[RMDB]
Chemical mapping of a 177-nucleotide RNA with DMS and 2A3.
In probing experiments dimethyl sulfate is read out at A N1 and C N3, which are open when not base-paired.
Values cover nucleotides 27 to 126.
The RNA was probed in 150 mM KOAc, 10 mM MgCl2 and 150 mM bicine (pH 8.5) at 24 C.
RNA sequence: GGGAACGACUCGAGUAGAGUCGAAAAAUCGGCCCGCAGUACGCGCGAUCAGCGCGGAUCGUACGCGCAUGCGUCGAUCGAUCUGGCCGUACGAGUACGUGAUCGAUCGCAGGCCAGACAGCAUGGAUCUUCACAACGUCUUCGGACGUUGUGAAGAAAAAGAAACAACAACAACAAC
Reactivity to DMS in 0.01 (KOAc 150mM, MgCl2 10mM, bicine 150mM(pH8.5), 24C), signal-to-noise 2, nucleotides 027 to 126: a050u010c100g000g000c020c000c090g070c110a100g030u000a140c000g030c020g010c020g000a190u010c280a100g010c040g060c020g000g010a010u000c020g040u020a030c000g000c020g020c240a100u010g000c020g020u000c000g000a000u000c010g000a070u000c010u000g000g050c070c020g010u000a080c060g010a070g010u020a060c050g020u030g000a050u020c080g030a050u000c080g030c050a140g020g010c010c010a100g010a030c150a120g000c070a060u010g000g010a230
Reactivity to 2A3 in 0.01 (KOAc 150mM, MgCl2 10mM, bicine 150mM(pH8.5), 24C), signal-to-noise 2, nucleotides 027 to 126: a000u050c050g140g000c000c000c000g000c010a050g040u100a040c030g030c010g000c020g040a300u250c120a070g120c000g000c010g060g000a050u040c010g020u100a020c000g030c020g000c070a030u230g030c030g050u030c010g020a010u020c020g000a170u000c000u030g060g000c060c010g000u020a020c040g030a050g180u070a070c080g080u160g170a120u140c000g040a030u020c030g000c050a040g010g000c020c000a040g100a050c020a040g070c030a080u120g070g080a070